[RMDB]
RNA sequence: GGGAACGACUCGAGUAGAGUCGAAAAGAAAAUAAGGCAAAAGAAACUAGAGAAACAUCCUAGGAAGAUGAAAAGAACUAUCGGCAGCGUAGAAUGCCCUACGGAUAGGAAGCCUUAGAAAGAAAAAGGGUAAUGUACUGUUCGCAGUACAUUACCCAAAAGAAACAACAACAACAAC
Reactivity to DMS in 0.01 (KOAc 150mM, MgCl2 10mM, bicine 150mM(pH8.5), 24C), signal-to-noise 2, nucleotides 027 to 126: g000a160a030a090a040u020a010a000g040g000c040a050a020a110a170g000a160a100a130c010u000a040g010a230g040a150a120a120c140a130u010c000c000u050a000g010g050a000a120g000a020u000g030a080a020a230a070g030a140a140c020u000a000u010c020g010g010c300a080g000c050g060u000a030g000a090a060u050g000c020c000c040u000a010c000g000g000a010u010a000g010g020a090a160g000c000c000u000u000a010g000a060a150a030g010a010a000a030a010a090
Reactivity to 2A3 in 0.01 (KOAc 150mM, MgCl2 10mM, bicine 150mM(pH8.5), 24C), signal-to-noise 2, nucleotides 027 to 126: g010a000a010a000a000u040a000a000g000g000c120a000a230a000a140g050a000a120a120c120u060a070g000a000g020a080a150a000c030a010u060c000c000u000a030g050g150a300a090g090a070u040g150a070a050a030a020g080a040a010c030u030a000u010c050g180g000c100a050g140c010g020u060a000g000a210a000u220g040c000c040c000u060a060c000g000g020a000u000a030g000g150a000a030g000c000c000u000u000a050g050a010a170a000g120a000a010a000a000a000

An RNA of 177 nucleotides, treated with DMS and 2A3 and read out base by base. The 2A3 profile rests on 987 reads. Conditions: 150 mM KOAc, 10 mM MgCl2 and 150 mM bicine (pH 8.5), 24 C. For DMS, 1,676 sequencing reads were counted. Values are in units of 0.01, from 0 to 300, in steps of 10. High DMS reactivity at an A or C suggests that its Watson-Crick edge is free. Values cover nucleotides 27 to 126.